[RMDB]
RNA sequence: GGGAACGACUCGAGUAGAGUCGAAAAGCAGUUCCAGAGUCUGUGGACUCUGAAUACUAGCGGUGAGUCGUCGUCCACAGACGACGUGAAGUGAUUAUGAGAAUGAUCACACUCACGACGUAUUCUCAUAUGUCCUAUCGCUAGGAACUGGAUAGGCGUGCAGUAUUAAUUUCGAUUAAUACUGCACAAAAGAAACAACAACAACAAC
Reactivity to DMS in 0.01 (KOAc 150mM, MgCl2 10mM, bicine 150mM(pH8.5), 24C), signal-to-noise 4, nucleotides 027 to 156: g020c020a040g020u000u010c020c000a050g010a060g000u000c010u000g020u000g040g010a140c010u010c000u010g000a060a060u000a120c010u000a040g010c030g030g020u010g010a060g020u000c000g030u000c010g000u000c040c150a150c170a180g010a040c000g010a020c000g020u010g010a040a220g010u010g010a070u000u000a020u000g000a300g010a230a050u000g000a040u010c010a060c020a200c110u000c050a040c030g010a050c030g010u010a050u000u000c100u010c090a050u000a040u010g010u000c010c010u000a020u000c000g010c020u000a040g010g000a060a060c020u000g000g010a140u000a070g040g020c210
Reactivity to 2A3 in 0.01 (KOAc 150mM, MgCl2 10mM, bicine 150mM(pH8.5), 24C), signal-to-noise 9, nucleotides 027 to 156: g060c010a000g010u020u000c020c010a010g010a010g010u050c060u160g150u250g120g000a010c000u000c010u020g020a020a020u110a100c020u020a010g060c030g020g030u020g030a030g020u040c000g000u000c000g000u010c030c030a100c030a100g000a000c000g000a000c000g000u020g030a070a020g020u030g030a010u000u030a010u040g100a040g060a140a060u060g020a030u030c010a010c010a030c060u030c000a020c030g050a010c020g050u040a050u100u070c100u010c050a020u050a040u120g030u020c000c020u040a020u040c000g010c060u010a010g030g000a020a020c010u020g020g030a080u070a080g100g040c070

Notes
Chemical mapping of a 207-nucleotide RNA with DMS and 2A3. High 2A3 reactivity points to a flexible backbone, as in loops and unpaired stretches. For DMS the reverse transcriptase was MarathonRT. The data come from the RNA Mapping Database (RMDB), library OK3TST.